[RMDB]
RNA sequence: GGGAACGACUCGAGUAGAGUCGAAAAUCUUAGGAGUUCGCUCCUAAGAAAAGGGCGAGGCCCUGCCAGCUCUUCGGAGCAAUACUCGGCCAGUCACUCAGAAUGCGCUACCCUUCGGGGUAGCGAAUUCGGAGGCACAAUUCGUUGUGCCUCCGAAAAAAGAAACAACAACAACAAC
Reactivity to DMS in 0.01 (KOAc 150mM, MgCl2 10mM, bicine 150mM(pH8.5), 24C), signal-to-noise 1, nucleotides 027 to 126: u000c010u000u000a010g010g000a010g030u010u000c230g020c000u000c010c000u000a000a000g000a010a050a110a100g000g010g020c030g000a090g000g000c010c000c050u000g000c110c140a300g000c050u000c000u030u050c150g070g020a020g030c020a040a080u000a090c010u000c170g000g010c030c010a160g010u000c050a060c040u010c030a080g020a080a060u010g000c000g000c020u000a000c000c000c000u010u010c210g080g010g000g000u000a000g000c010g040a000a030